Conditions: 150 mM KOAc, 10 mM MgCl2 and 150 mM bicine (pH 8.5), 24 C. This 177-nucleotide RNA was probed chemically with DMS.

RNA sequence: GGGAACGACUCGAGUAGAGUCGAAAACACAUGGAGACCCAUGGGCAGCCUUGGAUGAGGGGGCACCAACUGAGGUGGGCGGGCAGGAUACGCGGCGGAUCAGGCUCGGCCCAGGGGCAGUCAACGAAGGGAUACUAUGGUUCGCCAUAGUAUCCCUAAAAGAAACAACAACAACAAC
Reactivity to DMS in 0.01 (KOAc 150mM, MgCl2 10mM, bicine 150mM(pH8.5), 24C), signal-to-noise 1, nucleotides 027 to 126: c070a140c130a080u030g000g040a150g000a100c040c000c000a090u000g000g010g060c120a070g010c030c000u020u000g030g050a130u000g000a190g000g000g000g010g010c110a080c070c120a050a070c150u030g030a060g000g060u000g020g000g010c140g000g000g010c030a170g010g030a050u000a050c080g060c150g050g000c100g010g010a140u010c020a040g010g000c000u020c150g060g060c000c000c040a030g000g000g000g030c050a160g070u000c060a070a030c250g000a090